[RMDB]
RNA sequence: GGGAACGACUCGAGUAGAGUCGAAAAACCAUCCUAUUCGUAGGAUGGUGCACCUUUGCCGAUUGUAUAUAAUACCGCAGGCGGAAAAGCGGUUCAAAUAAGGAACUUGUCAGUUCGCUGACAAGAACUUACAACCAUAGUUCGCUAUGGUUGUAAGAAAAGAAACAACAACAACAAC
Reactivity to 2A3 in 0.01 (KOAc 150mM, MgCl2 10mM, bicine 150mM(pH8.5), 24C), signal-to-noise 5, nucleotides 027 to 126: a000c010c000a000u000c000c000u010a020u050u070c220g050u060a000g010g010a000u000g000g000u010g000c030a090c010c000u060u090u160g070c020c020g090a100u120u090g150u060a090u010a030u020a280a210u080a050c000c010g010c030a050g100g000c000g000g040a060a100a010a010g020c010g030g010u050u110c070a070a080a060u140a120a080g080g000a050a080c000u000u000g000u010c010a000g010u010u080c160g010c110u000g000a000c000a010a000g000a000a010
Reactivity to DMS in 0.01 (KOAc 150mM, MgCl2 10mM, bicine 150mM(pH8.5), 24C), signal-to-noise 7, nucleotides 027 to 126: a030c000c000a000u000c010c000u000a030u000u000c190g020u000a010g000g000a010u000g010g020u000g020c140a140c020c020u000u010u010g010c030c010g010a160u010u000g020u010a070u010a100u000a120a100u000a030c030c030g030c010a110g010g020c040g010g000a040a040a090a080g000c020g000g000u000u000c160a050a050a100u010a070a110g010g000a110a150c010u000u000g000u000c000a010g010u000u010c200g010c000u000g000a010c010a010a010g010a050a130

Source: RMDB library M2PK50, as collected in RNAgym.
The record gives the reactivity of an RNA of 177 nucleotides to 2A3 and DMS.
As a SHAPE reagent, 2A3 marks flexible, mostly unpaired nucleotides at the ribose 2'-OH.
The reactions ran in a buffer of 150 mM KOAc, 10 mM MgCl2 and 150 mM bicine (pH 8.5), at 24 C.